[RMDB]
RNA sequence: GGGAACGACUCGAGUAGAGUCGAAAAUAUCUUUAAUACAGAUGGAUUAAAUCGUGUAUUCAUCGUAUAGCAAUGUAAUGGAGAGUUACCACAUUUUAGUCGUUUAUUCAGAUCGCAGUGUUUAAUAACUAGCUUAAACAGAUGAGACGAUGUAUCCCACCACCGAUAUAUUCGUAUAUCGGUGGUGAAAAGAAACAACAACAACAAC
Reactivity to DMS in 0.01 (KOAc 150mM, MgCl2 10mM, bicine 150mM(pH8.5), 24C), signal-to-noise 3, nucleotides 027 to 156: u000a060u010c010u000u000u000a090a130u020a180c050a080g020a090u000g010g010a070u000u000a050a150a090u010c090g020u000g040u000a090u000u000c010a010u010c030g060u000a080u000a110g050c070a070a130u020g020u000a040a120u000g030g010a200g050a210g010u000u000a070c060c040a040c050a110u000u000u000u000a160g010u000c040g020u020u000u000a090u030u000c050a120g000a090u010c060g020c080a070g020u000g000u010u000u000a040a080u000a060a100c060u000a160g010c150u010u010a050a080a080c030a150g010a130u000g000a110g030a030c020g010a070u000g000u000a090u000c030c020
Reactivity to 2A3 in 0.01 (KOAc 150mM, MgCl2 10mM, bicine 150mM(pH8.5), 24C), signal-to-noise 4, nucleotides 027 to 156: u080a030u030c020u030u180u090a110a060u130a070c040a020g030a030u030g030g010a010u050u110a070a070a070u090c070g020u060g040u110a120u040u000c000a000u000c010g000u040a030u070a060g020c040a060a080u100g010u120a050a060u080g040g010a070g010a020g130u020u050a040c010c020a030c010a100u030u090u030u090a050g020u040c030g010u000u010u050a090u100u100c040a040g050a140u080c020g000c100a050g030u010g040u100u120u050a070a080u050a050a060c080u070a020g040c000u030u090a070a060a050c010a030g010a050u020g010a010g010a010c000g000a000u010g040u050a040u020c020c000
Chemical mapping of a 207-nucleotide RNA with DMS and 2A3. Reactivities are given for positions 27 through 156. The RNA was probed in 150 mM KOAc, 10 mM MgCl2 and 150 mM bicine (pH 8.5) at 24 C. The data come from the RNA Mapping Database (RMDB), library OK3TST.